[RMDB]
RNA sequence: GGGAACGACUCGAGUAGAGUCGAAAAAACAUUUCUGAAGCAGCAGGUAGACAUUUGUAGCAGUCUUUUAUUUUAAACAACACAUGCUCUUUUAUUUUUUGAGCACCUCUGAGUGCUCUCUUCUGUACUUGAUGGCAGGGAAGGGAGGACUCAGCAGUAUGCCUUCAAGUUUCGACUUGAAGGCAUAAAAAGAAACAACAACAACAAC
Reactivity to 2A3 in 0.01 (KOAc 150mM, MgCl2 10mM, bicine 150mM(pH8.5), 24C), signal-to-noise 1, nucleotides 027 to 156: a000a010c090a080u180u150u030c040u040g020a090a010g040c010a000g010c050a020g000g080u060a020g040a050c000a030u140u120u040g050u160a010g020c110a040g000u000c030u060u040u050u040a130u000u160u010u040a100a070a010c020a020a060c070a000c020a060u040g010c020u020c020u020u110u070u100a150u180u190u120u020u070u020g000a000g000c020a020c040c030u000c010u020g000a000g000u010g090c000u000c000u000c000u000u000c010u000g030u080a300c040u030u110g050a080u180g140g090c040a040g020g010g060a020a000g000g000g000a000g000g010a000c000u010c000a000g000c000a000g000